Structure probing data (2A3) for a 207-nucleotide construct. The 2A3 profile rests on 1,359 reads. It was measured as part of the RMDB library M2RFPK.
RNA sequence: GGGAACGACUCGAGUAGAGUCGAAAAUGAGACAAACACGCUUCACAAUGUGCGACAAAGAAACAUUGUUUAUGCAAAGGCACUUCGCAAUGUGUGCUCAAACAUUGCUUAUUCAAACACGCUUCACAAAAGAAUCAGUGGUUCGCCACUGAUUCAAGGUACAAACGCUGUUCGCAGCGUUUGUACCAAAAGAAACAACAACAACAAC
Reactivity to 2A3 in 0.01 (KOAc 150mM, MgCl2 10mM, bicine 150mM(pH8.5), 24C), signal-to-noise 3, nucleotides 027 to 156: u080g040a040g030a080c050a040a190a000c110a000c030g010c050u010u010c010a010c000a020a030u010g000u000g020c030g040a010c090a060a110a030g100a020a060a000c000a000u000u000g050u000u080u150a170u090g080c060a020a000a020g110g000c000a010c040u010u030c060g000c000a000a040u030g000u000g040u030g010c040u070c200a070a020a000c000a010u020u010g000c000u100u150a170u020u100c110a080a100a040c020a030c140g140c140u160u160c120a050c040a050a090a000a150g000a000a000u000c000a000g000u000g000g050u000u030c120g060c060c000a000c000u000g000a000u000u000c000a000a010